[RMDB]
RNA sequence: GGGAACGACUCGAGUAGAGUCGAAAAGAUAUGGACGUAUUCUGUGAAGGAUGGCAAGACAUGAUGAUGGAUCGGAAACGAUCCGACAUCAACAGCUUGCAUCCUUCACAGAAUACGUCCUAAGUCACUGUGUAUUAGCGUUCGCGCUAAUACACAGAAAAGAAACAACAACAACAAC
Reactivity to DMS in 0.01 (KOAc 150mM, MgCl2 10mM, bicine 150mM(pH8.5), 24C), signal-to-noise 2, nucleotides 027 to 126: g010a060u000a300u000g000g010a030c000g040u010a010u000u000c000u000g000u010g010a030a040g000g000a040u010g020g000c020a000a000g000a030c070a300u000g020a030u000g020a170u030g010g020a010u010c000g010g010a090a080a260c030g010a020u000c000c000g010a020c000a020u000c020a020a090c280a190g000c000u000u000g000c000a020u000c000c000u000u010c000a000c010a010g000a000a000u000a000c000g010u000c010c000u010a000a080g000u000c010a190